[RMDB]
RNA sequence: GGGAACGACUCGAGUAGAGUCGAAAAUGUCUUACAUGGCAGCAGGUGAGAGAGAGAAAGAAAGAGAAAGAGGGUAAACUGCCACUUAUAAAACCAUCAGACCUCAUGAGAACUCACUAUCAUGAGAACAGCAUGGGGGAAACAGCCCCCAUGAUCCACACCCUUUAGUCUUCGGACUAAAGGGUGUAAAAGAAACAACAACAACAAC
Reactivity to 2A3 in 0.01 (KOAc 150mM, MgCl2 10mM, bicine 150mM(pH8.5), 24C), signal-to-noise 1, nucleotides 027 to 156: u070g030u010c020u010u130a070c040a130u130g040g000c050a010g000c040a030g020g000u030g020a060g010a000g010a010g040a000g030a070a080a000g000a050a070a020g040a070g010a010a060a000g050a070g020g040g010u030a080a050a000c000u010g000c010c040a010c000u100u060a020u000a270a080a040a040c020c000a010u070c010a020g050a080c010c000u010c000a010u010g010a010g010a040a020c040u040c060a020c030u070a010u000c000a010u040g010a010g000a050a050c030a020g050c000a000u000g000g020g020g000g000a010a100a130c050a070g050c000c000c000c010c000a010u000g000a000u020c020c010
The record gives the reactivity of an RNA of 207 nucleotides to 2A3. It was measured as part of the RMDB library OK3TST. 2A3 adducts were read by reverse transcription with SuperScript II with manganese.